[RMDB]
RNA sequence: GGGAACGACUCGAGUAGAGUCGAAAAGACUCGGACCGGCUCAUCUCGACAAGAGGCGGCAGUCCUCAGUGCUCUUACUCUUUUCUGUAAAGAGGAGACUGCUGGACUCGCCGCCCGAGUUCGAGCAUGGGCCAAUUCCGGGCGAAGAGAGCGCGGGCAUACUCUAAAACUUCGGUUUUAGAGUAUGAAAAGAAACAACAACAACAAC
Reactivity to DMS in 0.01 (KOAc 150mM, MgCl2 10mM, bicine 150mM(pH8.5), 24C), signal-to-noise 1, nucleotides 027 to 156: g000a060c000u000c000g010g030a060c300c090g000g000c000u010c000a060u000c010u000c020g040a100c030a270a290g000a160g030g030c020g040g000c000a050g000u000c000c010u000c010a080g020u010g000c100u020c000u000u000a300c060u010c010u090u010u000u000c250u030g000u000a000a040a050g020a060g030g000a070g000a060c000u000g020c030u030g020g000a050c000u010c140g040c000c040g010c020c020c000g010a090g010u000u010c000g010a020g000c110a000u000g010g000g020c030c000a000a020u000u020c010c010g010g020g000c000g020a110a120g020a080g000a070g030c060g050c050g050g030g010
Reactivity to 2A3 in 0.01 (KOAc 150mM, MgCl2 10mM, bicine 150mM(pH8.5), 24C), signal-to-noise 5, nucleotides 027 to 156: g020a020c000u010c010g000g010a010c020c050g010g000c020u010c010a000u000c000u000c000g000a000c020a070a040g110a210g050g000c000g000g000c000a000g000u000c000c010u010c010a080g010u160g220c010u000c010u130u280a270c010u040c000u030u100u160u080c200u300g290u300a030a010a000g000a000g010g010a000g010a010c000u020g080c080u010g000g000a000c000u030c110g000c000c000g000c000c000c000g000a000g000u100u030c000g010a000g000c020a000u010g000g010g000c000c000a000a000u010u000c000c010g000g020g000c020g050a160a020g060a000g020a010g050c060g000c080g040g030g010
Structure probing data (DMS and 2A3) for a 207-nucleotide construct. For 2A3 the reverse transcriptase was SuperScript II with manganese. Conditions: 150 mM KOAc, 10 mM MgCl2 and 150 mM bicine (pH 8.5), 24 C. For 2A3, 4,350 sequencing reads were counted. The data come from the RNA Mapping Database (RMDB), library VIROID. Reactivities are given for positions 27 through 156.